Conditions: 150 mM KOAc, 10 mM MgCl2 and 150 mM bicine (pH 8.5), 24 C. An RNA of 177 nucleotides, treated with 2A3 and DMS and read out base by base. Reactivities are given for positions 27 through 126. The data come from the RNA Mapping Database (RMDB), library RFMREP.
RNA sequence: GGGAACGACUCGAGUAGAGUCGAAAAAUUAUCCCUUCCUGUCAUCAUCACCUUCUUGUCCGUGCUCAUCAGCAUCUCAGACAAGUUACUAUGCUGGGAAAAUCAGGACCUCACACUUAGAUGAUCUGUGUCUCUAUAUGUUCGCAUAUAGAGACACAAAAGAAACAACAACAACAAC
Reactivity to 2A3 in 0.01 (KOAc 150mM, MgCl2 10mM, bicine 150mM(pH8.5), 24C), signal-to-noise 2, nucleotides 027 to 126: a010u180u130a080u070c010c010c010u010u030c050c000u070g040u050c010a040u010c000a000u050c040a030c050c000u060u000c010u080u040g040u000c000c020g030u010g000c000u010c060a260u030c030a070g030c020a050u000c020u000c030a020g000a130c020a070a030g000u000u070a130c080u080a020u110g030c010u000g000g020g130a040a060a050a060u080c040a040g020g050a020c000c010u080c010a070c000a020c050u100u110a050g020a110u140g010a070u050c040u090
Reactivity to DMS in 0.01 (KOAc 150mM, MgCl2 10mM, bicine 150mM(pH8.5), 24C), signal-to-noise 1, nucleotides 027 to 126: a090u030u000a070u000c010c020c010u000u000c000c000u020g000u000c020a040u000c030a060u000c030a100c090c100u000u000c030u010u010g020u000c030c150g030u000g000c040u000c060a050u030c150a110g020c060a020u000c080u010c140a050g020a050c050a050a070g050u030u000a050c130u000a060u010g010c030u010g000g000g020a040a000a100a040u020c070a050g050g000a060c020c040u030c020a020c060a050c070u020u000a090g010a070u000g010a100u000c170u010